[RMDB]
RNA sequence: GGGAACGACUCGAGUAGAGUCGAAAAUGGAGCAUUCUCCGGACUGAUGGGUGGAAUUGAGGGUCUCUGCCAAUACGUCUGGACAAUCUGUCUAUUGCUCCGGGUGGAACGCGUCCUCGCUGUGACAGGUGACGGGGGACUUCGGUCCCCCGUCACCAAAAGAAACAACAACAACAAC
Reactivity to 2A3 in 0.01 (KOAc 150mM, MgCl2 10mM, bicine 150mM(pH8.5), 24C), signal-to-noise 1, nucleotides 027 to 126: u090g050g000a010g060c000a000u060u060c010u000c060c010g020g000a010c030u090g010a110u080g030g100g030u020g010g020a110a050u140u110g070a230g030g100g020u020c030u000c010u080g000c010c000a050a000u090a020c000g010u010c010u000g000g000a010c070a070a020u080c070u080g260u010c010u110a160u040u070g000c000u000c000c000g000g000g010u080g000g000a180a100c060g070c000g130u020c000c060u010c000g010c130u030g010u010g010a060c090a010

The data come from the RNA Mapping Database (RMDB), library OK1LIB. The record gives the reactivity of an RNA of 177 nucleotides to 2A3. For 2A3, 460 sequencing reads were counted. Conditions: 150 mM KOAc, 10 mM MgCl2 and 150 mM bicine (pH 8.5), 24 C.